Background:
The record gives the reactivity of an RNA of 177 nucleotides to 2A3. Source: RMDB library RFM100, as collected in RNAgym. Conditions: 150 mM KOAc, 10 mM MgCl2 and 150 mM bicine (pH 8.5), 24 C. 2A3 adducts were read by reverse transcription with SuperScript II with manganese.
RNA sequence: GGGAACGACUCGAGUAGAGUCGAAAACCAUCGGCAUGAUCAUGAUGUGUUCUCAAAUAUCAGGCCAGUAAAUCACCAUGCUCGUGCUGGUAAAGGCUGGAGGGCUUGGGUUGGCCCACAUUGACAUCGGCAAGUACUUGUUCGCAAGUACUUGCCGAAAAGAAACAACAACAACAAC
Reactivity to 2A3 in 0.01 (KOAc 150mM, MgCl2 10mM, bicine 150mM(pH8.5), 24C), signal-to-noise 1, nucleotides 027 to 126: c000c000a000u000c000g000g000c040a010u110g030a000u020c000a000u020g000a010u060g020u020g130u170u170c140u000c000a010a080a000u200a070u000c030a030g020g020c000c000a000g160u140a000a110a000u120c050a220c000c020a000u060g050c000u000c050g000u080g000c000u040g020g020u150a000a000a300g100g000c000u000g000g020a020g120g090g000c000u020u060g000g030g030u020u000g000g040c000c080c000a000c000a070u000u100g020a000c000a080u020